[RMDB]
RNA sequence: GGGAACGACUCGAGUAGAGUCGAAAAGGAUGUCCCGACCGGAGGCCGACAAUCCAGGGAACCGGAUGUCAUCACGUUGUUGCAGUACCAGAUGGCAUCUUAAAUCCGAUCUGCAAAUACGCAUGUAAAAACCGGCAUACGUUCGCGUAUGCCGGAACACAGAGAAUAGGUUCGCCUAUUCUCUGUGAAAAGAAACAACAACAACAAC
Reactivity to 2A3 in 0.01 (KOAc 150mM, MgCl2 10mM, bicine 150mM(pH8.5), 24C), signal-to-noise 2, nucleotides 027 to 156: g040g020a060u080g050u040c000c010c010g010a070c040c060g000g070a000g030g070c050c030g080a110c160a050a070u080c020c020a030g000g040g020a030a030c050c020g000g000a000u000g020u010c010a010u000c030a000c200g040u060u080g090u040u040g010c050a020g050u070a060c050c050a080g010a010u000g020g000c020a010u040c000u010u080a060a050a000u040c020c030g010a060u040c040u060g000c000a020a080a090u170a100c100g000c100a120u160g030u300a060a070a020a010a060c000c000g000g000c000a000u000a000c000g000u030u090c280g020c000g090u010a000u000g000c000c000g000g010a000a000
Reactivity to DMS in 0.01 (KOAc 150mM, MgCl2 10mM, bicine 150mM(pH8.5), 24C), signal-to-noise 2, nucleotides 027 to 156: g010g000a100u020g020u000c010c010c040g040a100c030c050g040g030a050g020g030c030c040g000a080c050a110a180u000c040c030a160g000g050g020a100a110c060c140g030g030a020u000g040u000c000a040u010c030a270c160g020u000u000g000u000u010g000c030a060g000u000a060c060c060a140g000a040u000g000g010c020a030u000c040u000u000a040a110a090u010c040c000g000a090u020c070u000g000c050a070a070a110u000a060c110g010c050a090u000g030u010a030a060a030a110a130c010c000g000g000c020a050u000a030c070g030u000u020c230g020c060g000u000a020u000g020c000c030g000g010a010a040